[RMDB]
RNA sequence: GGGAACGACUCGAGUAGAGUCGAAAACACGCGUUCGCGCGUGAUCAAGCGUACUACGCUCGAUGAAAUUAAAUGGAGCUUUAGAAGUCCCAAAUAGGACCCCUAAAGCGUUGAAAUUUAAUGGAGAGCGUAUCGCAUUACGGGAUUUCGAUCCCAACAUAUAUAAGGACUUCGGUCCUUAUAUAUGAAAAGAAACAACAACAACAAC
Reactivity to 2A3 in 0.01 (KOAc 150mM, MgCl2 10mM, bicine 150mM(pH8.5), 24C), signal-to-noise 3, nucleotides 027 to 156: c000a000c000g010c000g020u060u120c250g010c010g000c010g120u010g010a020u120c060a110a020g010c010g020u060a080c050u010a000c030g010c000u000c010g240a290u080g020a050a060a030u020u010a000a000a020u040g030g010a010g000c040u030u000u000a010g000a260a060g010u020c040c010c020a130a190a020u100a060g000g000a010c000c020c040c020u000a000a000a010g010c010g100u020u030g010a020a040a010u000u000u010a000a030u040g010g010a030g030a000g020c000g000u000a000u120c000g000c000a000u060u110a050c120g000g000g000a000u060u120u080c190g050a010u090c010c020c020a020a020
Reactivity to DMS in 0.01 (KOAc 150mM, MgCl2 10mM, bicine 150mM(pH8.5), 24C), signal-to-noise 2, nucleotides 027 to 156: c030a030c030g000c000g030u000u010c230g100c010g080c000g020u000g000a070u000c100a110a160g020c020g040u000a080c110u000a000c010g020c000u000c010g000a100u030g030a170a100a040u000u000a020a010a030u010g010g010a300g010c000u000u010u000a020g000a020a020g010u000c000c000c010a050a090a290u010a050g030g020a030c000c000c010c010u000a010a000a010g030c000g000u000u000g010a090a170a050u000u000u000a000a010u010g000g000a130g000a040g030c010g030u000a000u000c000g030c000a070u000u000a100c060g010g010g000a070u000u000u010c190g010a170u000c000c000c000a040a200
An RNA of 207 nucleotides, treated with 2A3 and DMS and read out base by base. For DMS, 3,957 sequencing reads were counted.